Structure probing data (DMS and 2A3) for a 177-nucleotide construct. The RNA was probed in 150 mM KOAc, 10 mM MgCl2 and 150 mM bicine (pH 8.5) at 24 C.
[RMDB]
RNA sequence: GGGAACGACUCGAGUAGAGUCGAAAAUCGGCCCGCGCUGAUGGUCCUCGUAGUGCGCCGCCCAUACCAUCGUCACCAGGUAGUCGAGCGUAUCGCUCAUGUGACCGUAUUUCUCCACCGAAAUGCCGAGCAGCUAAUAUUUCGAUAUUAGCUGCUCAAAAGAAACAACAACAACAAC
Reactivity to DMS in 0.01 (KOAc 150mM, MgCl2 10mM, bicine 150mM(pH8.5), 24C), signal-to-noise 4, nucleotides 027 to 126: u000c060g010g010c000c070c090g010c090g010c020u010g010a090u000g020g000u000c020c020u000c110g000u000a070g030u010g040c080g000c080c040g010c010c010c040a130u010a070c060c030a070u000c060g000u000c050a050c050c060a090g000g010u000a040g000u000c100g010a040g020c030g010u020a100u000c080g000c000u010c020a090u000g020u010g010a080c030c110g010u000a090u010u000u000c010u000c010c080a070c110c070g000a070a060a060u010g020c100c150
Reactivity to 2A3 in 0.01 (KOAc 150mM, MgCl2 10mM, bicine 150mM(pH8.5), 24C), signal-to-noise 3, nucleotides 027 to 126: u050c000g030g000c010c010c030g030c030g020c030u080g000a070u080g060g070u060c010c030u040c050g030u040a050g060u020g040c040g000c030c020g040c000c020c000a030u080a000c020c010a040u070c040g030u020c010a010c050c010a020g090g000u050a050g090u070c090g010a010g010c020g020u140a120u250c070g000c030u000c000a020u080g040u060g030a020c000c010g000u010a090u000u060u010c030u040c050c010a070c050c010g080a050a040a080u110g040c060c070
DMS adducts were read by reverse transcription with MarathonRT.